[RMDB]
RNA sequence: GGGAACGACUCGAGUAGAGUCGAAAAGCUCCCACGUGAGUGGGAGCAUACCAUGUGAAUGGUAGAGCUCUGCAAUUCUCGUACAGGGAGGAAAACCCGUAGAGCACUCUACUCCGUUAGAUCGAGAGAUCGAGGAGUAGUGUGAAUGUACAGAAUGACUACACAUGAUGUUCGCAUCAUGUGUAGUAAAAGAAACAACAACAACAAC
Reactivity to DMS in 0.01 (KOAc 150mM, MgCl2 10mM, bicine 150mM(pH8.5), 24C), signal-to-noise 2, nucleotides 027 to 156: g030c000u010c010c000c020a050c040g010u000g000a250g070u010g040g000g020a060g020c030a000u000a000c020c020a030u000g020u000g000a270a040u000g000g010u010a030g000a160g000c000u010c000u000g000c020a060a130u000u000c000u010c010g030u000a020c080a150g040g000g030a160g000g010a070a060a090a140c040c010c040g000u070a050g000a210g020c000a040c030u000c010u000a000c000u000c010c000g020u000u000a230g010a020u000c030g020a300g020a300g000a020u010c000g000a130g010g010a010g010u000a020g000u000g000u000g010a030a090u000g040u010a070c040a060g000a130a150u010g020
Reactivity to 2A3 in 0.01 (KOAc 150mM, MgCl2 10mM, bicine 150mM(pH8.5), 24C), signal-to-noise 1, nucleotides 027 to 156: g010c000u000c000c000c000a000c000g000u020g060a060g010u010g000g000g000a000g000c000a000u010a000c000c000a020u020g060u000g130a140a030u000g000g000u010a020g000a020g100c010u020c010u050g030c010a030a080u090u010c000u000c000g000u020a050c050a020g020g010g010a040g020g080a000a010a020a070c020c000c000g030u020a020g020a000g000c000a000c000u000c000u000a000c000u000c000c000g030u020u100a030g000a010u000c000g000a010g010a010g000a060u000c010g000a030g000g000a000g000u000a000g000u000g010u000g030a060a050u060g000u020a020c000a030g090a080a040u110g050